Structure probing data (DMS and 2A3) for a 177-nucleotide construct. 2A3 is a SHAPE reagent: it acylates the 2'-hydroxyl of flexible nucleotides of all four kinds. DMS adducts were read by reverse transcription with MarathonRT. The 2A3 profile rests on 85,635 reads. The DMS profile rests on 39,970 reads. 2A3 adducts were read by reverse transcription with SuperScript II with manganese.

RNA sequence: GGGAACGACUCGAGUAGAGUCGAAAACUCUCCCUGGGAUGCAGCUCCCAGAAGGAGGGGAGGCUGCCAUCUCUGUGGUUCAGUCAACUGAGCUGUUCCAGCUUGCCUACUCUAGAGAGUCUGGGCAGAUACGUUUAAUUUUCGAAUUAAACGUAUCAAAAGAAACAACAACAACAAC
Reactivity to DMS in 0.01 (KOAc 150mM, MgCl2 10mM, bicine 150mM(pH8.5), 24C), signal-to-noise 9, nucleotides 027 to 126: c050u000c030u000c000c020c010u000g010g010g010a010u000g010c040a020g000c040u000c000c000c000a110g010a120a120g010g010a150g010g010g000g000a030g010g020c000u000g010c120c070a010u000c020u000c020u010g010u010g010g010u000u000c050a040g010u010c140a150a130c080u000g000a040g010c010u000g010u000u000c020c010a140g000c160u010u000g010c020c000u000a060c050u000c020u010a140g010a160g000a030g000u000c170u000g020g000g020c030a070
Reactivity to 2A3 in 0.01 (KOAc 150mM, MgCl2 10mM, bicine 150mM(pH8.5), 24C), signal-to-noise 9, nucleotides 027 to 126: c010u010c010u010c010c010c010u010g010g000g000a010u020g020c010a010g010c010u010c000c010c020a020g130a100a090g110g090a110g000g010g010g010a020g130g050c000u010g040c050c020a020u010c030u000c040u070g100u060g030g020u030u040c020a020g040u030c030a100a120c240u120g020a030g020c010u010g030u030u010c020c010a030g030c080u080u070g010c010c000u020a040c010u030c040u120a090g050a010g000a010g250u060c100u140g000g000g000c010a020